This 177-nucleotide RNA was probed chemically with DMS and 2A3. The reactions ran in a buffer of 150 mM KOAc, 10 mM MgCl2 and 150 mM bicine (pH 8.5), at 24 C.
RNA sequence: GGGAACGACUCGAGUAGAGUCGAAAAGGUAGCGAAGUUGACUGAUGCGCGGACACCGGGAAUCUUGUUCAGCUUCGUUUCAACCCGGCUCGCACAUGCCGCGCACAGCAUGCCUGCAACAUCCAGAAUUACGUGACUGGUUCGCCAGUCACGUAAUAAAAGAAACAACAACAACAAC
Reactivity to DMS in 0.01 (KOAc 150mM, MgCl2 10mM, bicine 150mM(pH8.5), 24C), signal-to-noise 2, nucleotides 027 to 126: g020g000u010a030g030c000g010a020a060g000u000u000g010a120c030u010g000a120u000g010c010g030c010g000g000a130c100a110c020c000g020g010g010a250a070u010c150u010u010g000u000u000c090a140g000c060u000u000c040g010u000u000u020c070a080a090c060c010c020g000g020c090u010c170g000c130a060c180a130u000g010c000c010g000c030g000c040a020c040a020g000c100a090u000g000c010c010u000g000c060a050a050c100a070u030c020c050a130g010a190
Reactivity to 2A3 in 0.01 (KOAc 150mM, MgCl2 10mM, bicine 150mM(pH8.5), 24C), signal-to-noise 2, nucleotides 027 to 126: g090g010u020a010g020c010g010a070a070g040u080u040g070a120c030u000g050a190u020g020c040g000c020g020g000a030c040a000c020c000g000g000g040a060a070u110c040u070u150g030u070u020c030a060g050c060u080u120c060g060u050u010u050c020a020a020c000c010c000g000g000c090u140c110g130c040a080c010a140u200g030c000c000g000c010g000c010a010c000a000g000c000a020u040g000c000c010u010g040c020a040a040c000a100u080c030c000a040g060a120